[RMDB]
Notes:
Source: RMDB library OK2TRN, as collected in RNAgym. This 177-nucleotide RNA was probed chemically with DMS.
RNA sequence: GGGAACGACUCGAGUAGAGUCGAAAAGCUCUUGUUGCCCAGGCUGGAGUGCAAUGGCACAUCUCGGCUCACCACAACCUCCACCUCUUGGGUUCAAGUGAUUCUCCUGCCUCAGCCUCCGGAGUAGUGCGACAAAACAGUUCGCUGUUUUGUCGCAAAAAGAAACAACAACAACAAC
Reactivity to DMS in 0.01 (KOAc 150mM, MgCl2 10mM, bicine 150mM(pH8.5), 24C), signal-to-noise 2, nucleotides 027 to 126: g010c070u000c000u000u010g020u000u010g000c020c020c020a160g000g020c150u000g020g000a060g020u000g000c060a160a080u000g000g040c040a030c100a120u010c040u000c080g000g000c020u000c070a100c020c070a040c070a060a070c090c010u010c010c040a090c040c030u000c030u010u010g000g000g010u000u000c060a050a070g010u010g000a040u000u000c020u000c010c020u020g000c040c010u000c060a070g010c030c010u000c010c000g010g020a060g000u000a060g000

Reactivities are rounded to 0.1 and cut off at 0 and 3.
Values cover nucleotides 27 to 126.
Conditions: 150 mM KOAc, 10 mM MgCl2 and 150 mM bicine (pH 8.5), 24 C.